[RMDB]
Chemical mapping of a 207-nucleotide RNA with 2A3. Values cover nucleotides 27 to 156. Conditions: 150 mM KOAc, 10 mM MgCl2 and 150 mM bicine (pH 8.5), 24 C. It was measured as part of the RMDB library M2RFOK.

RNA sequence: GGGAACGACUCGAGUAGAGUCGAAAAAGUCCGUGUACGCACGGACAAUUCAUAGAUUGCCUCUGUCAUUACCUACAUUAAGUAUGCAAUGGGAAUGCAAUCGUUGAAGAUCCUGUACGCAGGAUCAAAAAGCGGCUCGGGUUCGCCCGAGCCGCAAGGUAUCAUAUUACUUCGGUAAUAUGAUACCAAAAGAAACAACAACAACAAC
Reactivity to 2A3 in 0.01 (KOAc 150mM, MgCl2 10mM, bicine 150mM(pH8.5), 24C), signal-to-noise 1, nucleotides 027 to 156: a000g010u000c010c070g000u000g000u020a060c230g020c080a000c000g000g000a010c000a000a030u030u020c000a010u040a130g000a000u000u000g000c010c000u000c020u010g010u030c000a000u000u010a020c020c040u010a020c020a050u250u300a260a100g000u010a000u070g000c000a000a000u010g000g000g080a300a100u060g000c000a010a000u000c020g020u020u040g010a040a020g000a000u000c000c000u000g020u030a020c300g010c060a000g030g000a010u000c030a000a150a030a000a000g000c020g010g000c030u010c010g000g000g000u080u100c140g110c000c030c090g000a000g010c000c000g000c000a010a010